Chemical mapping of a 170-nucleotide RNA with DMS and 2A3. 2A3 adducts were read by reverse transcription with SuperScript II with manganese. DMS adducts were read by reverse transcription with MarathonRT. The 2A3 profile rests on 9,033 reads.
RNA sequence: GGGAACGACUCGAGUAGAGUCGAAAAUGUAUAGUACCUUACACUGCAUUGUACUAUUAUGCUACAUUCUAUUUUACUAAUGAGCCUGCAUUUAUUAUGCAUGUUUCUUGGUACAUUAUGUUCGGGCGGAGAUAGCGCUUCGGCGCUAUCAAAAGAAACAACAACAACAAC
Reactivity to DMS in 0.01 (KOAc 150mM, MgCl2 10mM, bicine 150mM(pH8.5), 24C), signal-to-noise 4, nucleotides 027 to 129: u030g020u020a100u000a090g040u010a000c000c070u010u040a000c140a160c290u000g030c080a080u020u010g020u050a000c060u040a050u000u050a000u040g020c070u000a010c140a080u000u000c080u020a050u040u020u040u010a070c040u040a040a070u050g020a060g040c020c040u010g030c010a030u030u050u070a000u090u040a040u000g010c000a040u010g000u000u070u010c070u000u000g030g040u000a000c270a000u030u030a060u000g020u010u050c110g000g000g000c070g020g040a060
Reactivity to 2A3 in 0.01 (KOAc 150mM, MgCl2 10mM, bicine 150mM(pH8.5), 24C), signal-to-noise 5, nucleotides 027 to 129: u040g110u000a000u010a050g010u010a000c020c000u060u040a060c170a020c080u180g040c050a040u080u020g020u000a020c010u000a010u120u070a120u170g070c030u070a050c010a050u080u000c000u070a120u050u110u020u040a030c010u030a010a080u130g010a010g020c010c030u000g000c010a000u050u060u060a210u250u120a000u020g020c020a020u030g010u020u120u010c000u020u020g000g000u010a050c030a090u070u140a060u100g030u010u070c060g000g000g000c000g030g000a040